[RMDB]
RNA sequence: GGGAACGACUCGAGUAGAGUCGAAAAUCAGGCGCAACUGCAUUCGCUGGGAAUCGACAGCAACAAAGAGGUGAUUACCCAUUGCCAGACCCACCACCGGUCCGGACUCACCUGGCUGGUUGGCAAAAGAUGCUUACAGAUUCGUCUGUAAGCAUCUAAAAGAAACAACAACAACAAC
Reactivity to DMS in 0.01 (KOAc 150mM, MgCl2 10mM, bicine 150mM(pH8.5), 24C), signal-to-noise 5, nucleotides 027 to 126: u000c050a140g010g020c050g000c190a100a080c090u000g010c070a280u000u000c090g020c020u010g010g020g000a070a050u000c050g010a070c020a030g000c100a080a060c120a020a080a090g000a070g000g000u000g000a090u010u000a110c020c020c020a180u000u000g010c010c040a070g000a100c030c020c040a120c090c070a050c040c040g010g010u000c020c050g000g010a160c210u010c160a090c030c020u000g010g010c020u000g010g010u000u010g010g010c100a040a040a100
Reactivity to 2A3 in 0.01 (KOAc 150mM, MgCl2 10mM, bicine 150mM(pH8.5), 24C), signal-to-noise 4, nucleotides 027 to 126: u050c010a020g070g000c010g000c040a040a140c060u130g020c050a090u120u120c050g020c050u030g040g020g040a040a060u040c030g070a050c010a030g050c010a050a080c040a080a190a020g100a030g000g100u070g050a090u020u140a190c000c000c010a040u020u080g010c000c000a020g030a100c010c000c030a030c010c000a000c030c000g040g000u000c020c030g020g060a110c050u040c170a180c010c000u020g010g000c000u010g000g000u030u080g000g000c010a000a030a000
Conditions: 150 mM KOAc, 10 mM MgCl2 and 150 mM bicine (pH 8.5), 24 C. Chemical mapping of a 177-nucleotide RNA with DMS and 2A3. For 2A3, 6,965 sequencing reads were counted. 2A3 adducts were read by reverse transcription with SuperScript II with manganese. The data come from the RNA Mapping Database (RMDB), library OK2TST. For DMS, 4,724 sequencing reads were counted.